Description:
The record gives the reactivity of an RNA of 207 nucleotides to 2A3 and DMS. Values cover nucleotides 27 to 156. For DMS, 2,779 sequencing reads were counted.
RNA sequence: GGGAACGACUCGAGUAGAGUCGAAAAGGGCCAUGUACCUAUCCAAAAUGAGAUCCCAUCUUGCACACUGUGCUAAUUUGAUAUUCUCAUGCCUCCUACUUGGAGAGAUCUGGACUAGAAGUCAGGGAAUAGGUCGUUUCUUUCGAGAAACGACCAAGUACAUGGGAAAGUUCGCUUUCCCAUGUACAAAAGAAACAACAACAACAAC
Reactivity to 2A3 in 0.01 (KOAc 150mM, MgCl2 10mM, bicine 150mM(pH8.5), 24C), signal-to-noise 5, nucleotides 027 to 156: g010g000g000c030c040a070u130g030u050a080c010c000u030a050u020c030c030a060a000a050a120u080g010a040g000a040u030c010c040c010a020u020c070u060u070g000c010a010c040a070c150u250g000u010g040c050u080a070a110u090u040u080g060a040u010a130u180u050c020u000c020a040u080g010c010c010u050c010c000u130a290c140u150u230g020g000a030g000a000g000a060u100c030u050g040g000a020c040u040a050g020a180a030g120u050c030a020g040g000g040a040a110u070a150g000g010u000c000g000u000u000u000c020u010u060u070c120g110a020g000a000a000a000c000g000a000c000c000a000a000
Reactivity to DMS in 0.01 (KOAc 150mM, MgCl2 10mM, bicine 150mM(pH8.5), 24C), signal-to-noise 2, nucleotides 027 to 156: g000g020g050c040c060a110u000g020u000a050c030c000u000a170u000c040c060a080a080a140a130u000g000a110g030a130u000c030c010c010a120u010c090u000u000g020c050a110c050a110c050u000g030u000g030c060u010a040a040u000u000u000g010a180u000a040u010u000c020u000c030a090u000g010c060c010u000c000c020u000a050c090u000u010g030g000a060g000a090g010a070u000c050u010g000g000a080c040u000a150g020a090a100g010u000c060a040g000g020g000a110a090u000a080g020g040u000c000g010u000u000u010c000u000u000u010c210g010a060g000a010a000a030c010g040a000c000c000a000a070